[RMDB]
RNA sequence: GGGAACGACUCGAGUAGAGUCGAAAAAAAAGAUAUGGAGUUCUGAUGAGCUUGGAUUUAACAGGAAAUUACAUCGGAAACGAUGUAAUUUCUCUGUUUGUCAGCUCGCAGAACUCCUAAGUCAAAACCCAUAUAAGAAGUUCGCUUCUUAUAUGGGAAAAGAAACAACAACAACAAC
Reactivity to 2A3 in 0.01 (KOAc 150mM, MgCl2 10mM, bicine 150mM(pH8.5), 24C), signal-to-noise 2, nucleotides 027 to 126: a050a030a000a070g090a060u130a070u130g000g000a000g010u000u000c020u040g250a300u120g020a060g040c010u150u240g160g020a070u300u300u060a020a010c000a000g040g000a020a010a020u000u000a000c000a010u000c000g010g010a050a120a070c000g010a000u000g010u000a000a000u010u010u000c000u010c010u010g000u000u000u000g000u000c010a000g010c020u010c010g000c000a000g000a000a000c000u010c000c000u000a000a000g000u020c030a000a000a050a090
Reactivity to DMS in 0.01 (KOAc 150mM, MgCl2 10mM, bicine 150mM(pH8.5), 24C), signal-to-noise 2, nucleotides 027 to 126: a060a060a080a120g000a030u000a300u000g010g010a020g020u000u000c000u000g000a140u010g010a020g010c000u000u000g030g010a030u000u010u000a000a000c000a010g010g000a000a000a000u000u000a000c000a000u000c000g020g010a150a090a160c000g000a010u010g010u000a000a000u000u000u000c010u010c000u000g010u000u010u000g000u000c010a020g000c000u000c000g000c010a010g000a000a000c000u000c010c000u000a020a030g000u010c000a110a080a110a150